Annotation
Chemical mapping of a 207-nucleotide RNA with 2A3 and DMS. The reactions ran in a buffer of 150 mM KOAc, 10 mM MgCl2 and 150 mM bicine (pH 8.5), at 24 C. For 2A3 the reverse transcriptase was SuperScript II with manganese. The 2A3 profile rests on 6,426 reads.
RNA sequence: GGGAACGACUCGAGUAGAGUCGAAAACACCGGGCGGACCGCUCAGCUCUUGGUCCGUGGGUGGUUAAACUCGAAUGGAAGGGUUUAAUGAGGUGUACCACUCUUUGAUGUGUGCGUCUGUACAUCCAAGGGCGCCCGUUCCAGAGGGUAUUAAGGGGUAGAUAUUUACAUUCGUGUGAGUGUCUACAAAAGAAACAACAACAACAAC
Reactivity to 2A3 in 0.01 (KOAc 150mM, MgCl2 10mM, bicine 150mM(pH8.5), 24C), signal-to-noise 5, nucleotides 027 to 156: c010a010c000c000g020g170g000c000g010g000a000c000c010g020c050u090c100a060g020c040u040c010u160u270g000g000u000c000c000g010u020g000g010g030u040g000g040u010u100a050a060a000c010u020c020g030a100a050u100g030g050a030a040g030g000g010u020u020u080a060a050u060g040a020g040g040u050g010u030a030c010c010a090c030u010c000u020u070u080g030a060u070g040u000g010u020g020c010g040u000c040u040g050u030a030c020a060u010c040c030a050a050g010g020g000c000g010c000c010c010g060u050u000c000c000a000g010a020g020g010g010u020a040u050u130a060a030g010g010g010
Reactivity to DMS in 0.01 (KOAc 150mM, MgCl2 10mM, bicine 150mM(pH8.5), 24C), signal-to-noise 4, nucleotides 027 to 156: c010a040c000c010g020g030g030c020g000g020a030c010c010g030c130u000c090a220g020c110u010c070u000u010g080g020u010c010c010g040u000g000g020g040u000g010g000u010u000a040a040a050c000u000c000g010a170a140u000g010g010a140a270g000g000g010u010u000u000a040a110u010g020a130g030g050u000g000u000a060c040c020a070c010u000c020u010u010u000g010a050u000g020u010g000u000g020c090g020u010c040u000g020u000a080c040a040u010c060c050a070a170g020g020g020c090g010c010c020c010g020u000u000c060c060a080g020a300g010g010g050u000a080u000u000a070a100g010g000g010